[RMDB]
RNA sequence: GGGAACGACUCGAGUAGAGUCGAAAAUGCGCAGGACGAGGCGAGCUGCGUCGUGUUCGGAAUGCCGCGCGAGGCGAUCGCGAUGGGCGGCGUCGACGACGUCGCGCCCCUUUCCGACAUGAGUCGAGCCACUCAGUAGGUUCGCCUACUGAGUGGCAAAAGAAACAACAACAACAAC
Reactivity to DMS in 0.01 (KOAc 150mM, MgCl2 10mM, bicine 150mM(pH8.5), 24C), signal-to-noise 2, nucleotides 027 to 126: u000g010c030g020c020a030g000g050a100c140g020a110g010g020c040g010a160g020c010u000g000c010g010u000c030g010u000g000u030u000c020g010g000a040a030u000g020c120c120g020c020g000c020g010a030g000g030c140g010a150u000c020g010c030g020a070u010g040g000g030c020g000g000c010g020u000c010g010a170c170g000a060c030g010u000c040g010c060g000c030c020c120c040u000u000u000c010c000g030a050c000a040u000g000a070g000u000c060g020a250
Reactivity to 2A3 in 0.01 (KOAc 150mM, MgCl2 10mM, bicine 150mM(pH8.5), 24C), signal-to-noise 3, nucleotides 027 to 126: u110g000c040g010c010a030g030g020a080c040g070a070g010g100c050g040a090g020c020u030g000c020g020u010c020g000u030g050u080u070c000g020g050a050a020u090g080c060c000g070c000g000c000g010a020g020g070c140g120a130u040c000g000c000g070a130u110g010g040g020c010g010g000c010g020u000c030g080a210c150g000a010c020g010u010c030g020c020g050c030c000c000c000u020u020u000c000c010g000a020c020a010u070g000a030g060u120c040g030a020
Source: RMDB library OK2TST, as collected in RNAgym. The record gives the reactivity of an RNA of 177 nucleotides to DMS and 2A3. The reactions ran in a buffer of 150 mM KOAc, 10 mM MgCl2 and 150 mM bicine (pH 8.5), at 24 C. The 2A3 profile rests on 3,261 reads.